[RMDB]
RNA sequence: GGGAACGACUCGAGUAGAGUCGAAAAUGAAUGUGAGCAACUGAUGGGGAUGAUCUUGCGAACGUGUUGAUCACUCGGUUUUCGUCUUGAGACAACAAAUCGCUUGGGCGAGAUGCAGAGUAAGACGAGCACAUCGGUAAUUCGUUACCGAUGUGCUAAAAGAAACAACAACAACAAC
Reactivity to DMS in 0.01 (KOAc 150mM, MgCl2 10mM, bicine 150mM(pH8.5), 24C), signal-to-noise 2, nucleotides 027 to 126: u000g000a140a090u000g030u000g000a140g000c050a070a060c170u030g010a070u010g020g020g010g000a100u010g000a050u010c070u010u000g000c030g090a070a080c250g010u000g010u000u000g000a090u000c050a050c050u010c040g030g000u000u000u000u000c110g000u000c010u000u000g000a120g000a070c140a060a090c150a010a030a100u000c040g000c050u000u020g030g000g020c010g000a020g000a160u000g020c010a050g010a110g000u000a040a060g000a070c070g010
Reactivity to 2A3 in 0.01 (KOAc 150mM, MgCl2 10mM, bicine 150mM(pH8.5), 24C), signal-to-noise 2, nucleotides 027 to 126: u110g050a030a060u180g020u050g030a030g000c030a030a060c040u070g000a080u130g040g020g030g020a020u060g010a010u030c010u010u080g030c000g000a060a020c040g040u130g060u030u040g010a070u070c020a030c070u020c020g070g020u030u030u030u050c010g040u030c000u060u130g060a060g050a040c020a100a000c000a000a140a040u120c070g000c050u080u110g190g060g000c000g010a000g010a020u100g070c080a010g000a010g090u050a030a040g060a000c050g020